[RMDB]
RNA sequence: GGGAACGACUCGAGUAGAGUCGAAAAGAUAUGGAUCUACUACCCACCGUCAGUAUCGGAAACGAUAUGGGACGAGGUAGAGUCCUAAGUCAAAAGGUAAGAGGCGUCUUCGGACGCCUCUUACCAAGGUACGUAUGGAGUUCGCUCCAUACGUACCAAAAGAAACAACAACAACAAC
Reactivity to DMS in 0.01 (KOAc 150mM, MgCl2 10mM, bicine 150mM(pH8.5), 24C), signal-to-noise 1, nucleotides 027 to 126: g020a020u010a300u010g000g000a050u000c050u000a120c000u000a000c000c000c000a260c170c000g000u000c010a300g030u010a010u000c010g000g000a140a050a160c000g000a000u000a010u000g030g000g000a030c000g000a020g000g000u000a000g010a060g000u020c000c000u010a080a150g000u000c060a090a080a180a140g000g000u000a010a000g020a020g020g030c010g010u000c000u000u020c190g040g050a020c000g020c000c000u010c000u000u000a000c000c000a030a020